[RMDB]
RNA sequence: GGGAACGACUCGAGUAGAGUCGAAAAUUUUUUCUUGAGUAGGAUCCGUUGGAUAUCGGGUUUGAAUGUGGGAGGCAUCAACUUCCAAUUCUAAAUACGUCUCAAGACCGAUAGAGUAUUAGUACCGAACGCAAGAAAAGUUCGCUUUUCUUGCGUUAAAAGAAACAACAACAACAAC
Reactivity to 2A3 in 0.01 (KOAc 150mM, MgCl2 10mM, bicine 150mM(pH8.5), 24C), signal-to-noise 3, nucleotides 027 to 126: u080u040u030u000u020u040c010u030u000g020a040g010u030a020g070g050a020u000c030c050g070u010u080g100g070a130u130a080u240c050g020g000g020u030u060u140g040a040a010u130g080u100g270g030g000a020g000g020c090a210u030c050a230a090c030u000u000c000c010a000a010u000u050c020u030a050a070a060u120a080c040g110u000c000u000c010a010a020g000a010c000c000g040a040u070a060g050a000g060u060a210u220u100a040g050u010a030c030c030g020
Reactivity to DMS in 0.01 (KOAc 150mM, MgCl2 10mM, bicine 150mM(pH8.5), 24C), signal-to-noise 3, nucleotides 027 to 126: u000u030u020u040u020u000c010u000u000g010a040g000u000a070g010g000a050u000c010c010g030u040u030g040g010a130u020a050u010c020g000g010g030u000u000u010g000a030a010u010g030u000g000g000g000a020g000g030c240a100u030c300a070a110c010u000u000c000c000a070a030u000u010c030u010a040a060a060u010a060c070g000u040c030u000c030a000a040g000a050c200c080g000a050u020a050g020a050g030u000a070u010u000a060g010u010a130c020c030g020